RNA sequence: GGGAACGACUCGAGUAGAGUCGAAAAGCACGUCGUUACGACGACGUGCAAGAAAACAAAAGGAGUGGCGAUCCCUGGCCACAGUGAAUCAAACAGGGAAAAAGCAUGGUGGUACGCCACCAUGCAAUAAUAUGGUGGCAUUCGUGCCACCAUAUUAAAAAGAAACAACAACAACAAC
Reactivity to DMS in 0.01 (KOAc 150mM, MgCl2 10mM, bicine 150mM(pH8.5), 24C), signal-to-noise 2, nucleotides 027 to 126: g000c010a010c000g000u020c010g030u000u010a150c160g010a040c000g010a000c020g000u000g010c050a000a030g000a130a060a090a120c120a030a070a040a150g020g000a080g030u000g000g000c020g010a060u000c010c000c000u000g000g000c000c040a020c000a100g000u020g050a200a120u040c090a000a000a050c000a030g000g000g000a020a100a060a120a050g000c020a000u020g010g120u000g040g020u000a060c200g050c000c000a000c040c000a000u000g000c010a010a020
Reactivity to 2A3 in 0.01 (KOAc 150mM, MgCl2 10mM, bicine 150mM(pH8.5), 24C), signal-to-noise 3, nucleotides 027 to 126: g010c000a010c010g020u000c000g020u030u090a110c240g040a020c000g000a000c000g080u010g000c000a000a000g000a000a060a000a000c120a020a120a050a040g260g100a160g010u000g010g000c010g020a130u020c010c000c000u000g000g000c000c000a000c020a000g030u030g050a030a060u210c080a050a010a010c010a020g000g000g040a120a090a000a000a000g000c010a000u000g000g000u010g020g030u050a020c300g070c010c000a000c000c000a000u000g000c000a000a000